RNA sequence: GGGAACGACUCGAGUAGAGUCGAAAAGAACGAGUUCUGCCCAUUUCGUAUAUCCUUUCCUCAGCAGAACUCGAAGGGCUUGAGAACGAGGAUGGAAAGGAUAUACGAAAUGUUCUCAAGCCCAAGACUACUCGUUACUAUUCGUAGUAGCGAGUAGAAAAGAAACAACAACAACAAC
Reactivity to DMS in 0.01 (KOAc 150mM, MgCl2 10mM, bicine 150mM(pH8.5), 24C), signal-to-noise 9, nucleotides 027 to 126: g000a180a050c010g000a030g000u000u000c000u000g000c020c030c100a020u000u000u000c000g010u000a030u010a110u010c040c030u000u000u000c000c000u000c020a280g000c020a020g010a010a040c000u000c000g010a060a040g020g010g010c010u010u000g000a020g010a020a020c010g000a030g010g010a040u000g010g000a070a110a200g000g010a120u000a030u000a000c000g000a000a010a010u000g000u000u000c000u000c010a020a020g000c000c000c010a020a030g000a180
Reactivity to 2A3 in 0.01 (KOAc 150mM, MgCl2 10mM, bicine 150mM(pH8.5), 24C), signal-to-noise 6, nucleotides 027 to 126: g040a030a010c010g000a000g000u000u000c000u000g000c020c020c020a010u000u010u000c000g000u000a050u000a070u150c010c010u040u120u000c000c000u000c000a000g000c000a000g000a010a000c000u000c000g010a040a010g000g000g000c000u000u010g010a000g000a000a000c000g000a000g010g000a000u010g020g070a030a020a010g050g020a020u010a010u000a050c000g000a000a000a000u010g000u000u000c000u000c000a000a000g000c000c000c000a000a000g010a000
Structure probing data (DMS and 2A3) for a 177-nucleotide construct. It was measured as part of the RMDB library OK2TRN. The DMS profile rests on 57,974 reads.